[RMDB]
RNA sequence: GGGAACGACUCGAGUAGAGUCGAAAAUAGUCGGAAUUCGUUCCGACUAGAUGAACGCUGCAAGCGGCAGCGCGCUCAAAAGAGCACCCAAAAGCAACGCAAAAAUGAACUUAUUCGUAAGUUCAAAGCGUGUAGAACUAUUCGUAGUUCUACACGCAAAAGAAACAACAACAACAAC
Reactivity to DMS in 0.01 (KOAc 150mM, MgCl2 10mM, bicine 150mM(pH8.5), 24C), signal-to-noise 2, nucleotides 027 to 126: u000a000g000u000c000g010g000a010a030u000u010c170g000u000u010c010c000g020a010c000u010a010g000a120u000g020a180a080c000g010c010u000g030c060a100a100g020c210g000g000c010a000g010c010g010c070g010c000u000c010a070a100a090a060g020a020g000c040a170c020c000c000a050a090a150a140g030c070a050a070c030g020c100a040a040a040a070a070u000g000a010a010c000u000u000a020u000u000c200g000u000a010a020g030u020u000c000a050a050a060
Reactivity to 2A3 in 0.01 (KOAc 150mM, MgCl2 10mM, bicine 150mM(pH8.5), 24C), signal-to-noise 3, nucleotides 027 to 126: u020a010g010u010c000g010g030a010a010u100u030c210g050u110u000c010c000g000a000c000u000a000g000a020u140g030a070a000c020g000c010u000g000c070a210a220g240c070g170g000c130a000g000c020g000c000g000c000u000c000a100a110a080a080g000a010g000c010a050c000c010c000a030a110a010a020g070c040a060a050c060g020c120a030a120a080a000a150u050g000a000a000c010u010u010a010u060u080c220g070u030a010a000g000u000u000c000a000a050a010